[RMDB]
RNA sequence: GGGAACGACUCGAGUAGAGUCGAAAAUCGAGUUCGAUCGAGAACGAUCGUGUACACGAGUACGAGAACGUACGUACACGUGAGAUCUCGUUCGAGAGAGAGUGAGUGAGUUCUCACUCGAUCGAACACGUACUCACGAACACUCACACGAACGAGAGCUCAUUCGAUACUUCGGUAUCGAAUGAGCAAAAGAAACAACAACAACAAC
Reactivity to DMS in 0.01 (KOAc 150mM, MgCl2 10mM, bicine 150mM(pH8.5), 24C), signal-to-noise 3, nucleotides 027 to 156: u000c030g010a160g020u000u000c010g000a050u010c020g000a080g050a160a150c070g000a140u030c010g010u010g010u010a040c000a130c090g040a300g050u000a050c030g100a180g040a110a220c080g000u000a110c020g010u000a030c010a060c000g010u030g000a210g000a110u000c000u000c020g020u000u000c010g010a070g000a190g000a080g020a140g020u010g000a100g020u010g010a130g000u010u000c080u000c040a130c000u000c000g000a000u000c000g000a030a040c010a100c090g010u000a090c030u010c030a120c080g010a070a130c030a110c010u000c010a120c040a300c020g000a010a050c040g020a070g010a090
Reactivity to 2A3 in 0.01 (KOAc 150mM, MgCl2 10mM, bicine 150mM(pH8.5), 24C), signal-to-noise 9, nucleotides 027 to 156: u120c030g020a030g010u000u010c000g000a010u000c010g000a000g020a140a060c070g030a050u050c010g000u010g000u030a010c070a030c160g120a090g010u020a020c050g010a060g100a300a050c060g020u030a000c020g000u010a000c020a000c000g000u030g030a050g010a040u020c000u000c000g000u010u000c010g000a000g000a000g010a010g000a000g010u020g000a050g010u020g010a020g020u140u080c100u020c080a080c010u000c010g000a000u000c000g000a000a000c070a010c210g090u100a040c010u010c020a010c010g070a170a030c030a000c030u040c030a100c010a000c090g020a020a000c010g060a010g010a020
Chemical mapping of a 207-nucleotide RNA with DMS and 2A3. For DMS, 5,116 sequencing reads were counted.